[RMDB]
RNA sequence: GGGAACGACUCGAGUAGAGUCGAAAAUCCUCGUCGGUGAAGUCUCCCGCGCGGGUCCUCUUCCUAGGUCCGGAAUCAACCUCCAUCCGAUCUGUCCGGAGCUUUUUCGGCGGAGGAGCUCCCUCCCCUAUCAAUACGUGUUCGCACGUAUUGAUAGAAAAGAAACAACAACAACAAC
Reactivity to 2A3 in 0.01 (KOAc 150mM, MgCl2 10mM, bicine 150mM(pH8.5), 24C), signal-to-noise 2, nucleotides 027 to 126: u000c010c000u000c010g030u020c010g000g060u030g020a020a020g060u050c010u020c050c010c010g010c030g000c020g010g020g010u010c000c020u050c040u080u070c010c020u040a040g000g070u020c060c030g030g060a030a090u110c050a050a070c030c000u000c020c010a080u020c020c020g020a060u020c030u030g100u030c000c020g030g010a030g010c000u050u010u010u030u090c010g020g000c040g020g030a040g010g000a020g010c010u030c000c000c000u030c000c000c000
Reactivity to DMS in 0.01 (KOAc 150mM, MgCl2 10mM, bicine 150mM(pH8.5), 24C), signal-to-noise 3, nucleotides 027 to 126: u000c010c000u000c040g000u000c030g000g000u000g010a060a100g010u010c040u010c040c020c050g030c140g040c070g020g000g010u000c030c060u000c060u000u000c020c020u010a060g010g010u000c050c040g010g020a070a070u010c130a070a160c070c010u000c020c030a120u010c060c030g000a090u010c050u010g010u010c100c100g000g000a040g010c070u000u010u000u000u000c050g010g000c070g010g020a040g000g000a060g020c120u000c000c000c020u000c000c010c010
Conditions: 150 mM KOAc, 10 mM MgCl2 and 150 mM bicine (pH 8.5), 24 C.
An RNA of 177 nucleotides, treated with 2A3 and DMS and read out base by base.
For DMS, 3,568 sequencing reads were counted.
Values cover nucleotides 27 to 126.
The 2A3 profile rests on 3,109 reads.
2A3 adducts were read by reverse transcription with SuperScript II with manganese.
The data come from the RNA Mapping Database (RMDB), library 15KREP.